[RMDB]
An RNA of 177 nucleotides, treated with 2A3 and DMS and read out base by base. The data come from the RNA Mapping Database (RMDB), libraries RFM100 and RFMREP. For DMS the reverse transcriptase was MarathonRT. Conditions: 150 mM KOAc, 10 mM MgCl2 and 150 mM bicine (pH 8.5), 24 C.
RNA sequence: GGGAACGACUCGAGUAGAGUCGAAAAUGCCUCACCGUUUUCCGAAUGUUGUAUGUUUAUUCAGAAACAUCCAGACAUGGUCCGGCCCAUCAGAUGAGUGGCAAGACAAGCUCAUCCGAAAAGAAAAAUCGUUGUAUUAGUUCGCUAAUACAACGAUAAAAGAAACAACAACAACAAC
Reactivity to 2A3 in 0.01 (KOAc 150mM, MgCl2 10mM, bicine 150mM(pH8.5), 24C), signal-to-noise 9, nucleotides 027 to 126: u080g030c000c000u030c020a040c020c010g020u040u010u080u050c020c020g090a110a060u040g020u020u010g020u050a100u010g030u000u030u020a210u110u140c080a020g170a030a040a020c010a010u020c040c010a030g040a090c010a030u080g030g000u020c020c010g020g000c000c010c010a070u070c010a010g010a030u020g000a010g010u050g020g030c110a140a030g130a090c050a060a020g010c000u010c000a010u000c010c020g070a070a070a030a030g130a020a090a040a020
Reactivity to DMS in 0.01 (KOAc 150mM, MgCl2 10mM, bicine 150mM(pH8.5), 24C), signal-to-noise 5, nucleotides 027 to 126: u010g010c020c020u010c120a070c070c010g020u000u000u000u000c000c040g000a100a090u010g000u000u000g000u030a080u010g010u010u000u020a130u030u000c100a110g000a080a060a050c040a020u000c040c060a070g000a080c220a050u000g010g000u030c030c040g010g000c010c010c010a070u000c060a020g000a020u000g000a030g030u000g020g020c090a100a110g010a120c140a080a200g000c010u010c020a020u000c020c060g020a030a070a040a060g010a040a030a070a080

2A3 adducts were read by reverse transcription with SuperScript II with manganese. Values are in units of 0.01, from 0 to 300, in steps of 10.